[RMDB]
RNA sequence: GGGAACGACUCGAGUAGAGUCGAAAACGAAGCUUCGGCUUCGCACGAGGAAAAGUUAUAACGGUUAUGUUCAUAAUAACAGUCGUAAGCGUAUAGCUUUUCCCCUUUGAAGACUUGUUCGCAAGUCGAUAGACCCCUAGUUCGCUAGGGGUCUAUCAAAAGAAACAACAACAACAAC
Reactivity to 2A3 in 0.01 (KOAc 150mM, MgCl2 10mM, bicine 150mM(pH8.5), 24C), signal-to-noise 3, nucleotides 027 to 126: c000g000a000a010g050c000u090u150c200g100g000c000u000u000c000g010c010a090c060g060a220g000g010a000a000a000a000g000u040u000a010u050a190a120c010g060g090u020u010a010u050g050u070u050c030a060u100a300a040u140a220a120c070a050g040u040c010g000u000a000a000g080c010g000u000a000u010a000g010c000u000u010u000u020c000c000c000c050u110u140u130g150a150a030g010a000c000u020u020g010u070u080c160g010c110a010a000g010u000c020
Reactivity to DMS in 0.01 (KOAc 150mM, MgCl2 10mM, bicine 150mM(pH8.5), 24C), signal-to-noise 2, nucleotides 027 to 126: c010g000a010a000g000c010u010u010c220g040g020c000u010u000c000g020c100a100c110g000a050g000g000a030a010a010a040g010u000u010a020u000a070a110c010g020g000u010u000a000u000g010u030u000c020a080u010a080a110u000a070a150c240a160g020u000c040g020u000a020a010g020c020g010u000a020u000a000g000c000u000u000u000u000c000c000c020c010u000u000u020g010a120a110g000a010c000u000u000g000u010u010c190g020c020a000a000g010u000c000